Source: RMDB libraries RFM100 and RFMREP, as collected in RNAgym. Structure probing data (2A3 and DMS) for a 177-nucleotide construct. Values cover nucleotides 27 to 126. Conditions: 150 mM KOAc, 10 mM MgCl2 and 150 mM bicine (pH 8.5), 24 C.
[RMDB]
RNA sequence: GGGAACGACUCGAGUAGAGUCGAAAAAAAAGGGACACAUCUAAGGGCUUGAUAGUCUAUGAUGAAUGACACCAAGAGUUGGCUGAUGGCAACAUGAAAGGACACGUGCAAGACCUGAAAAGGUCACAAUCUCUGUGAUGUUCGCAUCACAGAGAUUAAAAGAAACAACAACAACAAC
Reactivity to 2A3 in 0.01 (KOAc 150mM, MgCl2 10mM, bicine 150mM(pH8.5), 24C), signal-to-noise 3, nucleotides 027 to 126: a000a000a000a000g120g010g040a050c050a000c000a030u030c030u010a000a110g010g010g000c000u090u130g110a160u270a100g000u000c030u000a010u120g040a000u010g070a080a080u100g020a000c030a030c090c030a030a010g080a000g050u040u140g100g020c070u080g050a090u070g010g040c000a010a000c050a140u070g120a040a050a020g040g010a010c000a000c130g070u090g030c000a000a070g000a010c010c020u000g020a000a030a010a010g030g010u020c010a020c030
Reactivity to DMS in 0.01 (KOAc 150mM, MgCl2 10mM, bicine 150mM(pH8.5), 24C), signal-to-noise 4, nucleotides 027 to 126: a050a040a060a050g010g000g010a110c070a130c010a030u000c030u000a030a190g010g010g000c030u000u020g000a120u020a040g020u000c000u010a260u070g000a000u020g000a080a040u010g010a150c080a090c030c000a060a060g000a050g010u010u000g020g010c080u000g010a090u040g000g000c090a040a030c090a010u020g000a030a070a070g000g010a020c090a060c040g040u010g030c160a140a060g000a010c020c000u000g000a070a030a070a010g010g010u000c000a070c190